[RMDB]
RNA sequence: GGGAACGACUCGAGUAGAGUCGAAAAAGUUGCAACCAUACCGUAUAAGGUUUGCAACUCUGUUAAGGAUACUCUGGCUUAUUAUGCUCACAGCGUGUUGUACAGAGUUUUUCCUUAUGACAUGGAUUAAACUGCCCGUUCGCGGGCAGUAAAAGAAACAACAACAACAAC
Reactivity to 2A3 in 0.01 (KOAc 150mM, MgCl2 10mM, bicine 150mM(pH8.5), 24C), signal-to-noise 3, nucleotides 027 to 129: a000g000u010u020g000c000a000a000c020c000a020u070a090c060c000g130u180a200u050a280a040g000g000u060u040u080g010c020a000a000c000u000c020u070g030u030u010a000a000g000g000a010u000a010c000u000c000u000g010g050c010u060u090a030u210u060a000u130g000c000u000c110a150c040a060g000c000g020u060g000u010u060g000u040a140c000a000g000a000g030u010u070u000u000u090c000c000u000u020a020u030g020a010c010a040u080g050g010a030u100u150a140a110
Reactivity to DMS in 0.01 (KOAc 150mM, MgCl2 10mM, bicine 150mM(pH8.5), 24C), signal-to-noise 3, nucleotides 027 to 129: a030g030u030u000g020c020a010a020c040c010a180u030a050c180c180g030u050a160u070a090a110g010g020u000u020u060g030c010a000a020c030u010c090u000g000u000u000a020a020g000g030a060u030a000c000u020c010u050g010g030c050u020u050a040u020u010a030u000g000c000u030c170a210c270a070g030c020g000u000g000u060u000g010u050a040c030a010g030a030g010u000u000u000u000u000c000c010u010u010a020u000g000a000c110a070u040g010g000a140u060u030a040a070